This 177-nucleotide RNA was probed chemically with 2A3 and DMS. The RNA was probed in 150 mM KOAc, 10 mM MgCl2 and 150 mM bicine (pH 8.5) at 24 C. It was measured as part of the RMDB library TTRDEL. 2A3 adducts were read by reverse transcription with SuperScript II with manganese. Reactivities are given for positions 27 through 126.

[RMDB]
RNA sequence: GGGAACGACUCGAGUAGAGUCGAAAAGAUAUGGAUCGCGAAGAACGAAAUGCGUGAGUGUCGGAAACGACACCACGCUCGCGGGAGCGAUCCUAAGUCAAAAUCGCGGCCGUUCGCGGCCGCGAAACCUUUAGCUAACGUUCGCGUUAGCUAAAGGAAAAGAAACAACAACAACAAC
Reactivity to 2A3 in 0.01 (KOAc 150mM, MgCl2 10mM, bicine 150mM(pH8.5), 24C), signal-to-noise 2, nucleotides 027 to 126: g000a010u050a010u060g000g010a010u010c010g030c060g070a220a240g110a300a070c040g020a100a300a300u300g020c000g010u040g030a220g010u010g020u000c000g000g000a020a020a000c000g000a000c000a010c000c000a000c010g030c000u010c030g070c020g030g040g010a110g000c000g000a000u040c000c000u000a030a000g010u000c000a000a010a010a300u050c000g000c000g080g000c020c010g050u090u060c300g010c060g160g070c040c000g000c000g010a000a000a000
Reactivity to DMS in 0.01 (KOAc 150mM, MgCl2 10mM, bicine 150mM(pH8.5), 24C), signal-to-noise 2, nucleotides 027 to 126: g010a040u010a300u000g020g010a010u010c000g010c010g000a230a220g040a090a060c010g010a210a140a060u010g010c000g020u000g000a100g010u010g010u000c010g000g000a080a080a090c010g000a000c010a000c000c000a010c000g010c010u000c060g000c020g000g010g060a300g000c000g000a000u030c000c000u000a040a070g000u010c070a140a070a100a130u000c000g010c000g080g000c000c050g070u000u020c290g030c080g000g000c020c040g000c000g000a010a000a020